[RMDB]
RNA sequence: GGGAACGACUCGAGUAGAGUCGAAAAGGCUGUUGCCGGAGCCGAUACCGGAAUACGAGACCUAAUGUGCGGUCGAAUGCACUGAAGUACGAAAGUACGAAGAGGUCAUACCGAGGACCGAGACUCGAUAUGCUCGAUAGAUGGAGCUUUACAUCAACCCUCAUACUACUUUCGAGUAGUAUGAGGGAAAAGAAACAACAACAACAAC
Reactivity to 2A3 in 0.01 (KOAc 150mM, MgCl2 10mM, bicine 150mM(pH8.5), 24C), signal-to-noise 4, nucleotides 027 to 156: g040g000c030u030g050u160u140g080c020c000g010g030a000g030c090c150g060a050u090a120c000c020g030g040a060a030u190a060c070g040a030g040a080c020c010u070a090a080u120g030u020g020c030g020g000u100c070g040a070a040u160g000c000a000c020u050g030a110a010g010u000a000c000g030a180a030a050g020u000a010c040g010a030a000g100a020g000g000u020c010a000u050a020c020c020g020a040g000g030a010c020c070g020a020g020a060c000u010c040g030a050u010a050u180g010c000u010c030g080a080u070a140g060a030u060g030g010a020g010c000u020u090u080a050c050a060u050c030a010a100
Reactivity to DMS in 0.01 (KOAc 150mM, MgCl2 10mM, bicine 150mM(pH8.5), 24C), signal-to-noise 3, nucleotides 027 to 156: g020g030c010u000g010u010u000g020c000c030g000g000a110g000c020c040g020a150u000a040c040c000g040g010a170a110u010a100c100g020a130g020a070c030c010u010a100a130u010g020u010g040c050g040g020u000c190g040a090a120u000g000c050a030c030u020g010a170a260g010u000a050c020g010a170a130a270g050u000a040c030g030a090a130g010a160g000g000u010c020a110u000a030c040c020g000a070g030g000a240c070c090g000a150g000a110c020u010c010g020a080u000a030u000g000c030u000c010g020a170u010a110g000a150u020g030g010a140g010c050u000u000u010a100c050a110u000c070a060a270
About this RNA
An RNA of 207 nucleotides, treated with 2A3 and DMS and read out base by base. For DMS, 4,643 sequencing reads were counted.